[RMDB]
RNA sequence: GGGAACGACUCGAGUAGAGUCGAAAAGAUAUGGACGCAGAUGUGAACUACAGCAUAUGUCGGAAACGACAUGGGCUGCACAUUAGUGCGUCCUAAGUCAAAAGUCUUUUACUUCGGUAAAAGACAACCAAAGGUUGUAGUUCGCUACAACCUUUGGAAAAGAAACAACAACAACAAC
Reactivity to DMS in 0.01 (KOAc 150mM, MgCl2 10mM, bicine 150mM(pH8.5), 24C), signal-to-noise 3, nucleotides 027 to 126: g020a070u000a300u000g000g010a040c000g020c000a070g000a030u000g010u000g010a100a040c140u030a300c040a010g000c000a040u000a020u000g030u010c000g000g000a130a100a300c000g010a000c000a010u000g000g000g010c010u000g000c020a010c020a010u000u000a140g020u000g040c010g010u000c010c000u000a000a080g020u040c060a120a080a160a160g000u000c020u000u000u000u000a010c000u000u020c230g020g030u000a000a000a010a010g000a020c010a040a110
Reactivity to 2A3 in 0.01 (KOAc 150mM, MgCl2 10mM, bicine 150mM(pH8.5), 24C), signal-to-noise 3, nucleotides 027 to 126: g010a020u110a050u160g000g020a000c010g010c020a000g010a090u000g040u020g030a170a130c150u250a070c300a000g000c000a020u000a000u030g000u010c020g030g000a060a080a070c020g000a010c000a000u010g060g040g010c010u060g000c020a020c000a000u040u100a200g300u030g070c000g000u010c000c010u010a000a010g010u000c030a010a000a080a170g000u020c000u000u010u010u000a020c020u030u110c300g140g010u000a000a000a000a000g000a000c010a010a010
Structure probing data (DMS and 2A3) for a 177-nucleotide construct. 2A3 adducts were read by reverse transcription with SuperScript II with manganese. Conditions: 150 mM KOAc, 10 mM MgCl2 and 150 mM bicine (pH 8.5), 24 C. It was measured as part of the RMDB library TTRDES. For 2A3, 6,236 sequencing reads were counted. Reactivities are given for positions 27 through 126.